[RMDB]
Chemical mapping of a 177-nucleotide RNA with DMS and 2A3. It was measured as part of the RMDB library TTRDES. For 2A3 the reverse transcriptase was SuperScript II with manganese.

RNA sequence: GGGAACGACUCGAGUAGAGUCGAAAAGAUAUGGAGACAGUAGGGAGCUUUGAGUCGGAAACGACUCUGAGCGAAGAACUACGUCUCCUAAGUCAAAACCAGACCUAACCUUCGGGUUAGGUCUGGACACAAGGAGAGUGUUCGCACUCUCCUUGUGAAAAGAAACAACAACAACAAC
Reactivity to DMS in 0.01 (KOAc 150mM, MgCl2 10mM, bicine 150mM(pH8.5), 24C), signal-to-noise 2, nucleotides 027 to 126: g000a000u000a060u010g030g000a020g000a020c000a080g020u000a030g010g030g030a060g020c000u000u000u010g030a010g000u000c010g020g010a010a010a030c000g030a010c000u000c000u000g010a000g060c000g000a110a140g000a240a300c020u000a000c010g010u000c010u000c000c010u000a000a030g000u010c000a160a100a120a230c000c010a010g010a000c000c000u010a000a010c000c000u000u010c240g030g010g020u000u000a000g010g000u000c000u010g010g000a100
Reactivity to 2A3 in 0.01 (KOAc 150mM, MgCl2 10mM, bicine 150mM(pH8.5), 24C), signal-to-noise 1, nucleotides 027 to 126: g010a000u000a000u050g000g000a030g000a020c130a140g060u000a010g030g000g080a080g010c000u030u010u030g000a020g010u000c000g000g000a050a000a000c000g000a000c000u030c010u060g000a010g000c010g040a250a020g030a010a000c000u000a000c000g000u000c000u030c000c000u000a000a000g000u000c000a030a000a050a220c010c000a000g020a010c000c000u010a020a000c000c010u050u150c300g070g010g020u000u000a000g020g010u000c000u000g000g010a000